The data come from the RNA Mapping Database (RMDB), library RFM100. The record gives the reactivity of an RNA of 177 nucleotides to 2A3. Conditions: 150 mM KOAc, 10 mM MgCl2 and 150 mM bicine (pH 8.5), 24 C.
[RMDB]
RNA sequence: GGGAACGACUCGAGUAGAGUCGAAAAAUCCAUUUUUAUAAAUCAGUUUACACUUUAUUUGUCAUGAUUCCAAUGGCAAAAAAGAGCUUAUUUACUAUAAGUGAAAGACUAAUCCUUCCAAUUACAAGAUCUCUGGUAUGUUCGCAUACCAGAGAUCAAAAGAAACAACAACAACAAC
Reactivity to 2A3 in 0.01 (KOAc 150mM, MgCl2 10mM, bicine 150mM(pH8.5), 24C), signal-to-noise 2, nucleotides 027 to 126: a000u070c020c010a030u000u040u000u080u000a060u010a000a040a010u010c040a010g000u010u100u150a100c100a040c030u050u100u150a260u100u060u000g020u010c010a000u000g150a170u280u020c010c020a060a000u000g010g000c000a000a000a010a000a000a000g010a030g000c000u010u010a020u010u020u000a020c100u020a080u010a120a040g020u000g080a180a050a010g060a050c120u070a090a080u060c010c000u030u180c040c020a160a130u120u100a170c030a040a100